[RMDB]
This 177-nucleotide RNA was probed chemically with DMS and 2A3.
The RNA was probed in 150 mM KOAc, 10 mM MgCl2 and 150 mM bicine (pH 8.5) at 24 C.
For 2A3, 1,778 sequencing reads were counted.
RNA sequence: GGGAACGACUCGAGUAGAGUCGAAAAGAUAUGGACUCUGGGCAACAGCAACAGCUCGGAAACGAGACAUGCUGACCCAGGAGUCCUAAGUCAAAGUACGAACAUGUCUUCGGACAUGUUCGUACAACUAACCCACGUUGUUCGCAACGUGGGUUAGAAAAGAAACAACAACAACAAC
Reactivity to DMS in 0.01 (KOAc 150mM, MgCl2 10mM, bicine 150mM(pH8.5), 24C), signal-to-noise 2, nucleotides 027 to 126: g010a050u000a270u000g040g010a000c000u000c020u000g000g000g000c010a070a030c000a000g000c000a040a090c300a200g000c000u020c000g000g030a120a060a130c000g000a040g000a040c090a210u000g000c020u000g050a160c000c000c000a020g030g010a030g000u000c000c000u000a000a070g000u000c030a030a100a110g000u000a010c000g020a040a010c000a020u000g000u000c000u000u020c230g000g000a000c000a010u000g000u010u000c010g000u000a000c000a030a150
Reactivity to 2A3 in 0.01 (KOAc 150mM, MgCl2 10mM, bicine 150mM(pH8.5), 24C), signal-to-noise 3, nucleotides 027 to 126: g010a050u090a080u080g000g000a000c000u000c010u020g000g000g010c040a160a050c010a110g000c020a000a130c030a220g010c030u000c000g020g040a080a080a000c010g000a040g060a050c040a040u080g020c000u230g300a300c000c000c000a000g000g000a000g020u030c020c000u020a080a000g040u000c080a060a140a060g050u000a000c000g020a000a000c010a000u010g000u000c020u080u200c300g000g030a000c010a000u000g000u010u020c000g000u030a000c010a000a000
The data come from the RNA Mapping Database (RMDB), library TTRDEL.